[RMDB]
RNA sequence: GGGAACGACUCGAGUAGAGUCGAAAAGAUAUGGAACCAACAGCUAGAAGGUGGGUCGGAAACGACCCAGCUUCUUGGACCUGUGGUUCCUAAGUCAAACCUGGUAACACUUCGGUGUUACCAGGAAGAUACCACAUACCUUCGGGUAUGUGGUAUCAAAAGAAACAACAACAACAAC
Reactivity to DMS in 0.01 (KOAc 150mM, MgCl2 10mM, bicine 150mM(pH8.5), 24C), signal-to-noise 4, nucleotides 027 to 126: g000a020u000a060u020g000g000a000a020c000c000a030a060c000a010g000c020u000a010g020a000a010g010g010u000g000g010g020u000c010g000g000a010a020a030c000g020a010c000c000c010a000g000c000u000u000c000u000u000g020g000a040c300c010u000g010u000g000g010u000u000c000c000u000a000a050g000u000c010a160a090a260c010c000u000g000g000u000a000a010c000a010c000u000u010c260g050g010u010g000u000u000a000c000c000a000g000g010a020a020
Reactivity to 2A3 in 0.01 (KOAc 150mM, MgCl2 10mM, bicine 150mM(pH8.5), 24C), signal-to-noise 2, nucleotides 027 to 126: g010a000u030a000u060g000g000a010a000c000c010a040a290c010a020g000c020u040a020g000a000a100g160g240u010g000g000g000u000c010g020g010a040a010a000c000g000a000c020c010c000a010g000c000u000u000c000u010u180g010g030a020c000c000u010g000u000g000g000u000u020c000c000u000a000a010g000u000c030a120a030a100c010c000u000g000g000u010a000a000c000a000c010u070u110c300g140g010u000g010u010u000a010c000c000a000g000g000a010a000

The data come from the RNA Mapping Database (RMDB), library TTRDES. An RNA of 177 nucleotides, treated with DMS and 2A3 and read out base by base. The RNA was probed in 150 mM KOAc, 10 mM MgCl2 and 150 mM bicine (pH 8.5) at 24 C. For 2A3 the reverse transcriptase was SuperScript II with manganese.